[RMDB]
RNA sequence: GGGAACGACUCGAGUAGAGUCGAAAACUGACACUUCACUGCAAAGGUUAGAGCUUUCUCGACUGGAACUGUUCUAAGUUUGGAAAUUAUAAGCUACCACUCUUCACCGGUACUAGAGGCAGCAGCCAGGAUGAUACUUCUUCGGAAGUAUCAUCCUAAAAGAAACAACAACAACAAC
Reactivity to DMS in 0.01 (KOAc 150mM, MgCl2 10mM, bicine 150mM(pH8.5), 24C), signal-to-noise 2, nucleotides 027 to 126: c050u000g010a100c090a100c030u010u010c050a090c070u000g000c040a050a070a060g010g030u010u020a050g000a070g020c100u000u000u000c040u000c090g000a100c030u010g020g000a040a090c060u000g000u010u000c030u000a030a080g000u000u000u010g000g000a060a130a070u000u010a120u000a060a100g010c070u010a080c050c040a060c040u010c060u000u010c040a070c080c020g020g020u010a020c070u020a030g010a110g010g000c000a080g000c040a070g020c060c080
Reactivity to 2A3 in 0.01 (KOAc 150mM, MgCl2 10mM, bicine 150mM(pH8.5), 24C), signal-to-noise 2, nucleotides 027 to 126: c020u030g030a010c050a010c090u000u100c030a050c080u090g040c090a090a080a080g030g000u080u080a050g030a020g050c020u040u150u070c050u010c030g040a070c060u080g030g080a070a030c030u070g040u130u000c030u100a090a130g040u000u040u070g080g050a080a080a030u230u200a160u130a260a020g040c030u080a060c010c040a010c030u020c000u100u100c040a030c070c020g060g020u030a030c020u020a020g040a060g070g000c000a040g000c050a000g000c030c000